RNA sequence: GGGAACGACUCGAGUAGAGUCGAAAAGAAAUUACGUUUCCUUUACACUUCUCAAACCGGGAUCAAGAGAAGCAAAGCAUCCCUCAUAUCCACGACGGAGGGUGUCGUGGAGUAUACUGUACCAAAAAGAGCGAACACGGCUUCGGCCGUGUUCGAACGCACAAUUUAGCUUCGGCUAAAUUGUGCGAAAAGAAACAACAACAACAAC
Reactivity to 2A3 in 0.01 (KOAc 150mM, MgCl2 10mM, bicine 150mM(pH8.5), 24C), signal-to-noise 1, nucleotides 027 to 156: g030a020a100a010u200u060a060c020g030u030u080u000c000c000u040u020u090a040c110a120c000u010u000c020u010c050a070a020a000c060c050g070g020g050a050u050c090a170a260g020a010g010a030a020g020c150a000a060a080g070c000a050u020c050c020c000u100c030a050u060a040u150c000c000a000c000g010a010c010g090g040a070g080g070g020u120g020u030c000g010u010g010g000a000g000u000a000u000a030c130u080g040u160a090c080c110a030a000a030a190a060g100a040g160c010g000a000a000c000a000c000g000g000c050u050u060c090g050g010c010c000g010u000g000u000u000c000g000a000a000

The record gives the reactivity of an RNA of 207 nucleotides to 2A3. It was measured as part of the RMDB library M2RFPK. For 2A3 the reverse transcriptase was SuperScript II with manganese. Conditions: 150 mM KOAc, 10 mM MgCl2 and 150 mM bicine (pH 8.5), 24 C.